[RMDB]
RNA sequence: GGGAACGACUCGAGUAGAGUCGAAAAUUGUACACUUAUAGCAUUGGAGAAGCCUCAAGCCCCAUUGCCUAUCUGGUUUUUGUCACUACACUCACUAGUGAUUAUACGAUUACAGUCUUUGUUACUGAGCGAGGAACCUUCGGGUUCCUCAAAAGAAACAACAACAACAAC
Reactivity to 2A3 in 0.01 (KOAc 150mM, MgCl2 10mM, bicine 150mM(pH8.5), 24C), signal-to-noise 4, nucleotides 027 to 129: u090u070g070u080a050c080a010c040u040u020a020u040a090g000c020a000u000u060g000g020a160g030a200a020g010c010c070u160c140a050a020g000c000c000c000c010a020u010u040g030c010c050u070a080u040c090u040g030g000u060u040u030u070u140g010u000c010a000c020u000a010c010a040c070u060c020a010c050u010a050g000u010g030a030u000u050a080u030a070c050g040a060u080u050a040c020a010g010u000c020u010u100u130g010u040u050a020c010u020g090a010g060c070
Reactivity to DMS in 0.01 (KOAc 150mM, MgCl2 10mM, bicine 150mM(pH8.5), 24C), signal-to-noise 4, nucleotides 027 to 129: u000u000g040u000a110c200a080c070u050u020a030u000a090g000c050a090u000u050g050g000a100g030a130a120g060c060c050u000c150a110a210g010c060c020c030c020a060u000u000g040c000c000u020a110u030c120u040g020g020u040u000u030u030u070g020u010c000a020c010u000a010c050a090c180u060c220a130c240u000a010g080u110g000a040u020u050a110u070a060c090g000a070u070u000a110c110a100g030u040c070u060u030u010g040u060u040a070c020u120g050a100g050c160
Background: Conditions: 150 mM KOAc, 10 mM MgCl2 and 150 mM bicine (pH 8.5), 24 C. An RNA of 170 nucleotides, treated with 2A3 and DMS and read out base by base.